[RMDB]
RNA sequence: GGGAACGACUCGAGUAGAGUCGAAAAUACGGAGUGCUAACCGCAAAAUCAUUUGGUGCUUUCAAAGAACUCUUACAGAGUGAAGAGGUUCGUCUGUCGCACUUCUGUGCUAAUAUCAGGCGUUGCCUUGACCGUGCUCUUAACUGGGCGCGUACCAUCGUAUUCCGUUCUUCGGAACGGAAUACGAAAAAGAAACAACAACAACAAC
Reactivity to 2A3 in 0.01 (KOAc 150mM, MgCl2 10mM, bicine 150mM(pH8.5), 24C), signal-to-noise 1, nucleotides 027 to 156: u220a010c050g000g010a030g030u090g070c060u010a050a030c000c030g030c080a040a100a030a270u140c050a100u100u030u100g010g000u090g020c000u030u150u210c080a130a060a040g000a040a000c000u030c010u010u080a110c100a110g020a010g040u010g120a110a020g000a060g030g010u000u060c000g000u030c060u060g070u120c090g000c050a000c000u280u290c090u250g000u010g000c000u110a110a170u000a080u300c000a000g070g000c040g010u010u120g090c000c000u000u000g000a020c040c040g000u010g010c010u000c000u050u110a260a210c300u140g000g000g060c000g020c000g000u000a030c000c020a030